Chemical mapping of a 177-nucleotide RNA with DMS and 2A3. For 2A3, 2,193 sequencing reads were counted.
[RMDB]
RNA sequence: GGGAACGACUCGAGUAGAGUCGAAAACAAGGAAAUUGCACCCGUUCAAAAUCCAUAUCAGUGCUUUUUGUACUACUCUGGCUCCACUUCUAUGGAAAAGGAUUUUGAGUAGCAGACAGGGAUGGAACACGUAUAGCCCAUUCGUGGGCUAUACGUGAAAAGAAACAACAACAACAAC
Reactivity to DMS in 0.01 (KOAc 150mM, MgCl2 10mM, bicine 150mM(pH8.5), 24C), signal-to-noise 3, nucleotides 027 to 126: c030a120a130g000g010a060a050a090u000u000g020c110a130c000c040c020g020u030u010c030a040a030a100a090u020c000c000a070u040a080u010c070a030g020u020g010c020u000u030u010u060u040g000u030a130c100u000a020c050u050c000u020g000g000c040u020c000c020a010c180u000u010c100u020a120u040g020g000a030a030a200a240g000g000a010u000u000u000u020g000a050g000u040a040g000c080a080g010a070c160a100g000g000g000a020u000g010g000a040a110
Reactivity to 2A3 in 0.01 (KOAc 150mM, MgCl2 10mM, bicine 150mM(pH8.5), 24C), signal-to-noise 4, nucleotides 027 to 126: c070a040a030g160g030a020a020a150u090u090g000c020a030c000c000c000g010u050u040c060a060a040a000a070u000c020c000a070u030a040u120c080a070g030u020g140c000u110u120u090u230u260g050u130a060c000u010a010c020u010c030u020g030g000c000u000c000c010a030c020u090u030c060u110a120u190g090g020a020a040a030a050g020g010a000u000u040u030u060g020a000g000u000a040g010c000a020g030a100c030a010g010g010g130a000u020g010g040a070a030
In probing experiments dimethyl sulfate is read out at A N1 and C N3, which are open when not base-paired.
The reactions ran in a buffer of 150 mM KOAc, 10 mM MgCl2 and 150 mM bicine (pH 8.5), at 24 C.